[RMDB]
RNA sequence: GGGAACGACUCGAGUAGAGUCGAAAAAGGGAGGUAAGACUCACCUGGAGACUCGUCGUCGACGAAGGGUUCUCCAGCCGAGCUCUCCUGAGCUCGCGGUCCUCCAGUGGUCGCCGAGCGUAAAAUCGACUUAUUGAUUCUUCGGAAUCAAUAAGUCAAAAGAAACAACAACAACAAC
Reactivity to 2A3 in 0.01 (KOAc 150mM, MgCl2 10mM, bicine 150mM(pH8.5), 24C), signal-to-noise 3, nucleotides 027 to 126: a000g030g000g000a010g050g000u070a050a050g070a090c000u000c010a030c020c010u000g000g000a000g010a000c000u000c010g010u000c010g130u140c170g150a220c050g010a030a040g090g030g020u210u110c000u000c010c000a000g050c070c110g000a000g000c000u000c010u000c000c010u020g020a020g000c000u010c000g010c020g010g030u030c000c010u110c060c030a190g050u200g140g000u020c040g000c130c090g000a000g000c020g050u070a070a070a000a090u160c070
Reactivity to DMS in 0.01 (KOAc 150mM, MgCl2 10mM, bicine 150mM(pH8.5), 24C), signal-to-noise 3, nucleotides 027 to 126: a090g010g000g000a020g010g050u000a030a030g020a180c010u000c020a180c290c010u000g020g010a020g000a040c000u000c010g010u000c040g010u000c280g010a110c060g000a010a040g000g000g010u000u010c000u000c000c000a030g000c300c120g000a020g030c000u010c010u000c020c020u000g000a070g000c010u010c010g000c020g000g000u000c010c000u010c170c220a190g010u010g020g000u010c010g010c060c050g000a020g000c040g010u010a030a030a100a090u030c130